[RMDB]
RNA sequence: GGGAACGACUCGAGUAGAGUCGAAAAGCAACGGGACCCCGUGAACCUUGUCAGGUCCGGAAGGAAGCAGCAAUAAGCGGGUCUUCUCGUGUGCCGCAGGAGUGCCUGAACCGAGCUAACUGCUUGCGUAACGCUUAUGGCUACGCAAUCGACAGAACAUAAGAUUAAGCUUCGGCUUAAUCUUAUGAAAAGAAACAACAACAACAAC
Reactivity to DMS in 0.01 (KOAc 150mM, MgCl2 10mM, bicine 150mM(pH8.5), 24C), signal-to-noise 4, nucleotides 027 to 156: g010c030a090a060c010g000g010g010a090c200c010c020c000g020u000g000a120a130c150c120u000u020g020u020c080a270g000g030u000c000c000g000g040a210a170g010g000a080a080g010c020a250g010c040a060a090u010a100a300g020c040g000g000g030u000c060u010u010c000u000c000g000u000g020u000g030c000c030g010c030a080g020g020a140g020u010g020c010c020u010g030a080a100c030c020g010a300g010c090u000a070a090c010u010g020c000u000u000g000c000g040u000a020a030c020g030c140u000u000a120u010g050g040c010u000a020c010g000c000a010a040u000c010g030a270c030a030g000a170a300
Reactivity to 2A3 in 0.01 (KOAc 150mM, MgCl2 10mM, bicine 150mM(pH8.5), 24C), signal-to-noise 6, nucleotides 027 to 156: g000c000a010a000c010g010g040g020a020c010c000c000c000g030u040g020a040a080c030c050u030u020g070u090c010a020g010g010u010c000c000g060g070a100a090g020g000a010a030g010c010a000g000c000a000a030u050a090a010g010c000g010g000g010u030c060u090u000c010u030c000g050u130g110u040g010c010c010g000c010a010g020g060a090g070u140g060c000c020u060g040a060a040c040c030g020a030g040c040u060a060a090c020u040g000c000u010u020g000c000g010u020a140a070c080g030c050u170u200a150u300g080g000c010u020a010c000g010c000a010a030u080c050g070a080c030a050g080a090a030